[RMDB]
RNA sequence: GGGAACGACUCGAGUAGAGUCGAAAAAGGUGAUUUCUCCUGCACCUUUAUCAAUGGAGGAACUCGACUUUGCUGUGGGUCCCAAAGGGACCUUAGGUGCAGACAGUUACCGGCGGUGAAGUCUGAGCAUAGGUUCGUGUCUUCGGACACGAACCAACUCAUUAAGGCCGUUCGCGGCCUUAAUGAGAAAAGAAACAACAACAACAAC
Reactivity to 2A3 in 0.01 (KOAc 150mM, MgCl2 10mM, bicine 150mM(pH8.5), 24C), signal-to-noise 1, nucleotides 027 to 156: a000g010g000u040g000a020u030u070u010c000u030c000c000u090g190c040a020c000c040u130u260u180a030u000c050a030a080u300g000g000a010g010g000a030a020c050u000c010g000a000c000u000u000u000g010c000u020g000u140g000g000g000u000c000c010c030a280a130a100g070g030g000a020c010c000u020u100a010g040g010u000g000c000a090g140a300c080a030g010u090u100a000c010c000g010g000c000g000g000u000g020a020a010g010u000c080u120g010a010g000c060a040u100a120g000g000u010u010c010g010u000g010u040c000u040u090c190g060g000a000c000a000c000g000a000a000c000c000a000a000

This 207-nucleotide RNA was probed chemically with 2A3. For 2A3 the reverse transcriptase was SuperScript II with manganese. The RNA was probed in 150 mM KOAc, 10 mM MgCl2 and 150 mM bicine (pH 8.5) at 24 C.